[RMDB]
RNA sequence: GGGAACGACUCGAGUAGAGUCGAAAAUGCUCGAACAGUUGAACCAAUCCGGCCUUCGUCCCGAUGCGAUCGUCUUCACCGGCGAUUUGGCCGAUAAGGGCGAACCGGCGGCAUACCGCAAGCUCCGAGGAUACUGACUAUUCGUAGUCAGUAUCCUAAAAGAAACAACAACAACAAC
Reactivity to DMS in 0.01 (KOAc 150mM, MgCl2 10mM, bicine 150mM(pH8.5), 24C), signal-to-noise 5, nucleotides 027 to 126: u000g010c020u000c040g030a070a140c130a130g020u000u000g020a120a190c030c060a080a130u000c040c010g020g000c100c110u020u000c030g000u000c010c000c020g010a180u010g020c060g010a030u000c020g000u000c020u000u010c300a090c300c190g000g010c010g000a040u000u000u000g020g040c030c120g020a090u000a070a080g020g010g000c020g000a010a090c040c010g000g010c130g000g010c050a070u000a050c050c060g020c110a100a080g000c050u000c020c030g010
Reactivity to 2A3 in 0.01 (KOAc 150mM, MgCl2 10mM, bicine 150mM(pH8.5), 24C), signal-to-noise 2, nucleotides 027 to 126: u020g000c000u020c050g040a060a030c040a100g020u070u060g070a090a050c030c000a010a070u050c020c000g040g000c020c050u050u030c000g030u020c010c010c020g020a040u120g020c010g030a010u000c000g010u000c000u080u070c050a030c030c010g020g000c000g030a020u060u010u160g230g000c000c000g000a020u030a040a070g000g000g020c000g010a010a020c020c000g020g010c000g020g000c010a050u070a120c020c030g030c040a050a040g000c010u020c050c040g030